[RMDB]
RNA sequence: GGGAACGACUCGAGUAGAGUCGAAAAACUUUUUGAUUCGUCAAAAAGUAACUACCGAGAAUGCGACUCGGUAUACGCAAAUAACGCUUGGAAACAAGGGAACAAACUAACGUUUCGACGUUAGUAAGAUGGAUCAGGGAUUCGUCCCUGAUCCAUCAAAAGAAACAACAACAACAAC
Reactivity to DMS in 0.01 (KOAc 150mM, MgCl2 10mM, bicine 150mM(pH8.5), 24C), signal-to-noise 1, nucleotides 027 to 126: a080c000u000u000u000u000u000g000a020u000u020c130g000u000c000a010a000a010a000a000g000u000a090a130c110u000a000c000c000g020a040g030a080a070u000g020c120g010a200c000u000c000g030g020u000a000u000a090c200g010c300a060a030a060u040a020a030c080g000c030u000u000g030g010a090a070a120c040a050a010g030g000g010a080a070c200a130a150a080c000u000a000a000c000g030u000u000u000c190g020a010c000g000u000u000a000g000u000a050a090
Reactivity to 2A3 in 0.01 (KOAc 150mM, MgCl2 10mM, bicine 150mM(pH8.5), 24C), signal-to-noise 1, nucleotides 027 to 126: a020c000u000u000u000u000u030g030a010u110u090c130g020u000c050a000a000a030a010a000g010u010a080a000c050u020a000c010c000g000a000g030a110a130u180g010c130g170a170c020u000c020g020g000u020a100u040a010c030g000c050a070a130a000u030a200a050c030g010c130u040u000g020g000a000a010a030c040a040a020g090g010g020a060a050c020a040a090a020c050u010a010a010c010g030u000u080u030c190g030a000c030g010u000u000a000g020u100a020a050